[RMDB]
Source: RMDB library OK2TRN, as collected in RNAgym. Structure probing data (2A3 and DMS) for a 177-nucleotide construct. The reactions ran in a buffer of 150 mM KOAc, 10 mM MgCl2 and 150 mM bicine (pH 8.5), at 24 C. DMS adducts were read by reverse transcription with MarathonRT. For 2A3 the reverse transcriptase was SuperScript II with manganese.
RNA sequence: GGGAACGACUCGAGUAGAGUCGAAAAGCACAGGCAGUUAAUGUGCAUACUGCUGCAAUGAAGGUAGGACUACGUAUAGUGUAUGGGAAUACCACCAGCUAUUUAGAUGUGUACGUGAAUGGAGUCACACCCUCCUGGUAUUCGUACCAGGAGGGUGAAAAGAAACAACAACAACAAC
Reactivity to 2A3 in 0.01 (KOAc 150mM, MgCl2 10mM, bicine 150mM(pH8.5), 24C), signal-to-noise 2, nucleotides 027 to 126: g020c010a050c050a060g070g000c030a000g040u030u130a180a100u110g030u110g100c020a010u060a030c030u030g020c000u030g000c010a010a140u150g110a190a090g020g020u010a000g040g100a020c050u020a010c090g120u110a060u060a180g130u130g030u050a070u100g060g090g010a050a060u060a070c000c030a010c010c000a000g010c030u070a100u150u180u080a090g010a140u070g030u020g010u040a000c060g050u050g030a020a040u050g120g000a050g080u080c010a010
Reactivity to DMS in 0.01 (KOAc 150mM, MgCl2 10mM, bicine 150mM(pH8.5), 24C), signal-to-noise 3, nucleotides 027 to 126: g040c040a040c070a150g010g020c050a030g000u010u000a080a080u010g040u010g020c070a090u000a080c050u000g020c040u000g020c120a110a080u000g010a090a070g010g000u000a070g030g000a150c030u000a050c080g000u000a070u000a070g010u010g010u000a070u000g000g010g000a240a050u000a060c030c020a110c120c070a080g000c050u010a070u010u010u010a040g020a060u000g000u000g000u010a030c070g010u000g000a060a080u000g000g010a100g010u000c060a160